[RMDB]
Source information:
The record gives the reactivity of an RNA of 177 nucleotides to 2A3 and DMS. The reactions ran in a buffer of 150 mM KOAc, 10 mM MgCl2 and 150 mM bicine (pH 8.5), at 24 C.
RNA sequence: GGGAACGACUCGAGUAGAGUCGAAAAGAUAUGGACACCUGGGAGCUUUCUGUUGAGAACCGAAGAACAAACUCGGAAACGAGUUUGGGAGGUUCUCAACGAAGCGAAGAACAGGUGUCCUAAGUCACUAUUAACGUUGGUUCGCCAACGUUAAUAGAAAAGAAACAACAACAACAAC
Reactivity to 2A3 in 0.01 (KOAc 150mM, MgCl2 10mM, bicine 150mM(pH8.5), 24C), signal-to-noise 2, nucleotides 027 to 126: g020a030u100a050u200g020g000a000c000a010c020c010u020g090g020g020a110g040c010u120u300u280c290u300g150u010u010g000a000g000a010a020c030c050g180a300a030g020a080a030c010a000a000a000c010u010c010g000g020a040a070a090c010g000a000g010u010u010u010g000g000g010a020g000g010u000u010c000u000c000a020a000c000g000a000a000g010c020g030a180a040g010a010a000c020a000g030g010u000g000u010c000c010u000a000a000g000u000c010a020
Reactivity to DMS in 0.01 (KOAc 150mM, MgCl2 10mM, bicine 150mM(pH8.5), 24C), signal-to-noise 2, nucleotides 027 to 126: g030a040u000a300u000g000g010a020c010a010c000c000u000g000g000g010a160g010c000u000u000u000c060u030g050u000u000g020a000g000a020a010c010c000g020a170a210g000a170a200c010a000a000a020c000u010c000g010g000a080a110a250c000g020a000g040u010u010u010g000g000g010a100g010g010u000u000c000u000c000a000a010c020g010a020a030g000c020g000a100a100g030a240a170c000a000g040g000u000g000u000c010c010u000a010a100g020u010c030a280